Conditions: 150 mM KOAc, 10 mM MgCl2 and 150 mM bicine (pH 8.5), 24 C. This 207-nucleotide RNA was probed chemically with DMS and 2A3. Values cover nucleotides 27 to 156. It was measured as part of the RMDB library OK3TST. The 2A3 profile rests on 1,329 reads.
RNA sequence: GGGAACGACUCGAGUAGAGUCGAAAAGUGUUUAAUGACCUAGUGCCUAAUGAUGCGAUUAGCGCAUUAAGUAUAGAAACAAAGCGUGUGUUGUUUCGGCAAUGUUUGCGAAAAAAUGCAACUAGUCUUGCGCGCAAGGUGCUAGAAUGGGAUGAACGAGUCAGCUUAAUUUCGAUUAAGCUGACUCAAAAGAAACAACAACAACAAC
Reactivity to DMS in 0.01 (KOAc 150mM, MgCl2 10mM, bicine 150mM(pH8.5), 24C), signal-to-noise 1, nucleotides 027 to 156: g060u030g040u000u000u000a070a070u020g040a090c010c000u010a070g080u000g000c000c010u050a060a060u000g010a030u020g060c110g020a190u010u010a080g020c030g030c010a000u000u000a020a040g010u010a130u020a180g010a020a010a010c020a030a180a090g050c000g000u010g070u000g070u000u000g050u000u000u000c030g050g000c080a040a080u000g010u000u000u030g000c040g010a000a070a080a060a050a160u010g030c040a040a030c010u000a160g000u000c000u000u000g010c050g070c050g070c080a120a110g030g010u000g030c030u010a030g000a000a060u000g030g000g000a110u010g000a090a100c160
Reactivity to 2A3 in 0.01 (KOAc 150mM, MgCl2 10mM, bicine 150mM(pH8.5), 24C), signal-to-noise 3, nucleotides 027 to 156: g030u020g060u060u050u070a150a080u230g030a010c000c000u000a000g020u010g020c000c000u050a090a000u130g140a070u200g020c090g100a080u050u120a040g030c030g000c100a000u030u020a020a000g010u010a050u070a170g110a050a100a020c090a020a100a040g020c060g040u050g000u010g010u100u010g000u000u020u020c050g040g000c000a020a060u130g030u080u030u050g040c010g180a010a110a030a050a030a140u180g000c000a020a010c010u030a030g050u040c000u050u060g010c060g000c000g000c080a080a030g140g000u050g000c010u000a000g010a030a020u070g030g000g060a030u030g060a180a060c100